[RMDB]
RNA sequence: GGGAACGACUCGAGUAGAGUCGAAAACUCAGUGAGAAACUCUGGGCGAGAAGCACGUACCAGCAGAGACACCCUGAGGUAGAGGCUGCUCACUAUAUAACCGUGUAAGGGAGGUAGACUUACGUGGACUAUGAUACUUUUUCGAAAGUAUCAUAGUAAAAGAAACAACAACAACAAC
Reactivity to DMS in 0.01 (KOAc 150mM, MgCl2 10mM, bicine 150mM(pH8.5), 24C), signal-to-noise 2, nucleotides 027 to 126: c010u000c000a060g010u000g010a040g000a100a150a110c030u000c020u000g020g010g020c050g000a100g000a130a120g010c110a090c040g020u010a100c070c050a050g000c060a030g020a080g010a050c090a070c040c010c010u010g000a130g000g000u030a210g000a260g000g000c140u000g000c000u000c000a070c160u000a300u050a220u170a100a110c030c010g010u000g000u000a020a020g000g000g000a040g010g000u000a060g010a050c030u010u010a030c050g010u010g000g010
Reactivity to 2A3 in 0.01 (KOAc 150mM, MgCl2 10mM, bicine 150mM(pH8.5), 24C), signal-to-noise 5, nucleotides 027 to 126: c010u000c000a000g000u020g070a070g050a050a110a020c020u020c020u030g010g010g020c030g010a110g100a180a040g080c070a020c080g040u070a230c000c000a010g030c020a000g010a010g020a010c000a020c000c020c000u030g020a020g000g000u090a050g020a060g150g000c110u100g000c000u030c060a040c010u040a030u030a050u050a300a090c020c020g030u020g010u060a030a050g010g030g030a070g050g020u050a030g030a040c000u020u040a010c010g030u020g020g000